Overview: The record gives the reactivity of an RNA of 177 nucleotides to DMS. Source: RMDB library M2PK50, as collected in RNAgym. For DMS, 928 sequencing reads were counted. The reactions ran in a buffer of 150 mM KOAc, 10 mM MgCl2 and 150 mM bicine (pH 8.5), at 24 C. For DMS the reverse transcriptase was MarathonRT.
RNA sequence: GGGAACGACUCGAGUAGAGUCGAAAAUGCAAUUAGUUCGCUAAUUGCACAUGUCUAGUCGCUAGAAAACGAUCAAAACUAGCGACUAGACUUUAUUGAUGGGGGGCCUGGCUUUCGAGCCAGGCAAGCUGCAUAGUUUCUUCGGAAACUAUGCAGCAAAAGAAACAACAACAACAAC
Reactivity to DMS in 0.01 (KOAc 150mM, MgCl2 10mM, bicine 150mM(pH8.5), 24C), signal-to-noise 1, nucleotides 027 to 126: u000g000c000a010a010u000u000a010g000u010u020c210g020c010u000a010a010u000u010g030c000a020c150a050u010g010u010c010u000a010g020u000c000g030c010u000a000g000a050a060a140a080c180g010a220u010c190a090a100a110a140c010u000a010g000c010g010a010c000u000a000g000a000c020u000u010u000a070u010u010g000a130u010g000g000g000g020g020g010c000c010u000g010g000c010u000u000u000c170g020a000g020c010c000a000g000g000c000a000a000